[RMDB]
RNA sequence: GGGAACGACUCGAGUAGAGUCGAAAAAUGAGCCCAUGGCAGGGCAAAACCAGUGUGGUACGGUAUGGAAAGGCUUGCCUCGGAGCCAAAGUAUCGCUAAGUGGGCAGGCUCCCGGGGCGCCGCACGCAACCUUAGUUUCUUCGGAAACUAAGGUUGAAAAGAAACAACAACAACAAC
Reactivity to 2A3 in 0.01 (KOAc 150mM, MgCl2 10mM, bicine 150mM(pH8.5), 24C), signal-to-noise 2, nucleotides 027 to 126: a050u050g000a020g010c000c010c020a020u070g170g030c070a050g020g000g000c000a000a020a000a100c010c010a040g040u030g010u000g030g020u060a090c070g010g020u070a060u150g090g090a130a050a050g120g000c010u060u140g020c000c000u010c000g000g010a000g000c000c020a060a110a030g160u150a190u270c000g000c080u070a230a100g080u180g070g040g040c020a030g000g000c010u020c020c010c000g000g000g000g020c010g000c000c000g000c000a030c030g050
Reactivity to DMS in 0.01 (KOAc 150mM, MgCl2 10mM, bicine 150mM(pH8.5), 24C), signal-to-noise 2, nucleotides 027 to 126: a070u000g010a300g030c010c000c010a030u010g020g010c070a130g000g000g020c020a030a030a050a090c060c010a130g030u010g020u010g010g020u010a050c070g000g000u000a050u000g000g000a070a100a090g000g020c030u000u000g020c010c000u010c010g020g000a050g000c000c010a070a110a080g000u000a060u000c090g000c070u020a060a090g000u010g000g000g010c060a140g010g000c020u010c060c030c040g050g010g000g020c020g010c000c000g000c100a020c090g010
The data come from the RNA Mapping Database (RMDB), library VIROID. Structure probing data (2A3 and DMS) for a 177-nucleotide construct. Reactivities are given for positions 27 through 126. For 2A3, 1,799 sequencing reads were counted. Conditions: 150 mM KOAc, 10 mM MgCl2 and 150 mM bicine (pH 8.5), 24 C. DMS adducts were read by reverse transcription with MarathonRT.